An RNA of 177 nucleotides, treated with DMS and read out base by base.
DMS (dimethyl sulfate) methylates the pairing face of unpaired adenines and cytosines.

[RMDB]
RNA sequence: GGGAACGACUCGAGUAGAGUCGAAAAUGAGGGAGUUCAAGAGUUUGGAGAUAAGUUUGAGGAACAAGGAGGCGAGUCCCUUGGUUUUACUUCAUACCAAGUCCGUUCUUCUGUGCCCAUCGGAAGAUACCUACCGCAGUUUCGACUGCGGUAGGUAAAAAGAAACAACAACAACAAC
Reactivity to DMS in 0.01 (KOAc 150mM, MgCl2 10mM, bicine 150mM(pH8.5), 24C), signal-to-noise 1, nucleotides 027 to 126: u050g010a030g000g000g000a090g000u000u000c050a060a100g000a080g020u000u000u000g000g000a120g000a060u000a040a100g010u010u000u000g010a080g020g020a090a060c060a060a080g000g020a110g010g010c030g010a110g020u020c030c140c050u000u000g010g000u010u000u020u010a130c110u000u010c070a100u010a060c030c020a040a080g000u010c050c050g010u000u000c000u000u000c010u010g000u000g010c030c030c000a100u010c030g000g000a080a060g000a090